[RMDB]
RNA sequence: GGGAACGACUCGAGUAGAGUCGAAAACCAGUGAUGCGCUGGUAUCAGAUGCGGCGGCGUGAGUGGAUGCCUCCGAUGCUGAUGACGAGGCGGCUGUUGCGCUGGCCGCUGCUGUACUUGCUGACGUUCAAAUCUCCUUAUUCGUAAGGAGAUUUGAAAAAGAAACAACAACAACAAC
Reactivity to 2A3 in 0.01 (KOAc 150mM, MgCl2 10mM, bicine 150mM(pH8.5), 24C), signal-to-noise 9, nucleotides 027 to 126: c010c000a020g090u090g150a140u160g030c030g000c040u030g010g020u030a040u250c040a000g030a040u050g020c000g000g000c000g000g000c010g000u020g080a070g040u190g050g020a060u050g000c000c000u000c000c010g020a030u100g080c110u260g070a290u100g020a030c020g000a000g000g000c020g010g000c020u030g030u100u030g000c010g000c010u050g270g040c000c010g000c000u010g000c000u000g000u010a010c010u010u040g000c040u050g060a070c050g040u010
Reactivity to DMS in 0.01 (KOAc 150mM, MgCl2 10mM, bicine 150mM(pH8.5), 24C), signal-to-noise 6, nucleotides 027 to 126: c010c010a120g000u010g010a070u020g010c070g010c040u010g010g010u000a000u050c010a010g000a240u010g010c020g000g010c030g000g010c000g030u000g010a030g030u000g010g000a090u010g010c000c000u000c000c020g000a150u010g020c280u020g010a090u010g010a300c300g000a050g010g020c010g010g000c010u020g030u000u010g000c000g000c010u000g010g030c000c020g010c010u000g000c020u000g010u000a030c040u000u000g010c010u010g020a140c120g000u000

Conditions: 150 mM KOAc, 10 mM MgCl2 and 150 mM bicine (pH 8.5), 24 C.
The record gives the reactivity of an RNA of 177 nucleotides to 2A3 and DMS.